Source: RMDB library M2RFPK, as collected in RNAgym. Structure probing data (2A3) for a 207-nucleotide construct. 2A3 adducts were read by reverse transcription with SuperScript II with manganese.
RNA sequence: GGGAACGACUCGAGUAGAGUCGAAAACGUCCCUGUCGUACAGAAUGGUAACAUAUCUCUCCAAAUAUCUGAGCUUGGGUAUACGGGGAAACCCAACCCCUUGGGAAGAUUGGGUAUAUGGCUAAAUUACAUCGAUUGUACUUCGGUACAAUCGAAACCAGUGAUUACGGUUCGCCGUAAUCACUGGAAAAGAAACAACAACAACAAC
Reactivity to 2A3 in 0.01 (KOAc 150mM, MgCl2 10mM, bicine 150mM(pH8.5), 24C), signal-to-noise 2, nucleotides 027 to 156: c050g110u050c000c000c000u010g120u080c120g070u120a080c060a130g110a150a200u200g050g040u120a200a040c020a020u070a040u020c120u010c040u070c050c010a140a140a060u190a040u000c010u010g030a020g100c020u000u010g000g010g000u010a020u020a050c040g020g000g000g050a080a030a010c000c000c000a000a020c000c000c000c000u010u030g050g000g010a020a020g000a020u020u060g010g000g010u020a010u010a000u050g020g040c020u080a060a150a160u180u070a060c070a120u010c000g020a010u000u000g000u000a000c000u020u020c130g050g000u000a000c000a000a000u000c000g000a020a000a000
The RNA was probed in 150 mM KOAc, 10 mM MgCl2 and 150 mM bicine (pH 8.5) at 24 C. Reactivities are given for positions 27 through 156.